[RMDB]
RNA sequence: GGGAACGACUCGAGUAGAGUCGAAAAUAUGUAAUGUGCUUGGAUGCAGAUACUAUCGUUGAUCAAGAUGCACCAUAUUAUAUGAUUGAGAAUUUCAAACAUGAUCCAAAACUUGGUGCAGUUACAGCUUUACGACUUUAUUCGUAAAGUCGUAAAGAAAAGAAACAACAACAACAAC
Reactivity to 2A3 in 0.01 (KOAc 150mM, MgCl2 10mM, bicine 150mM(pH8.5), 24C), signal-to-noise 9, nucleotides 027 to 126: u250a060u070g030u020a050a030u070g050u040g170c020u040u060g100g060a100u100g060c030a020g060a110u110a190c060u090a090u130c060g060u050u110g040a070u110c020a030a030g030a100u030g000c000a000c000c000a010u020a010u090u100a150u030a020u090g030a030u020u050g020a040g070a180a300u160u220u090c030a040a040a010c020a030u080g040a070u070c040c020a020a070a050a110c030u010u020g010g000u000g000c010a000g000u010u040a020c020a020g020
Reactivity to DMS in 0.01 (KOAc 150mM, MgCl2 10mM, bicine 150mM(pH8.5), 24C), signal-to-noise 9, nucleotides 027 to 126: u010a080u000g010u000a030a030u000g020u010g010c020u000u010g010g010a120u000g010c040a100g010a080u010a070c200u000a260u000c070g010u010u010g010a160u000c060a060a060g000a110u000g000c010a010c010c000a010u000a070u010u000a090u010a070u010g000a090u000u000g010a050g000a130a130u010u010u000c040a020a030a080c050a030u000g000a100u000c130c110a050a060a060a060c190u000u000g010g020u000g000c000a030g000u000u000a040c080a080g010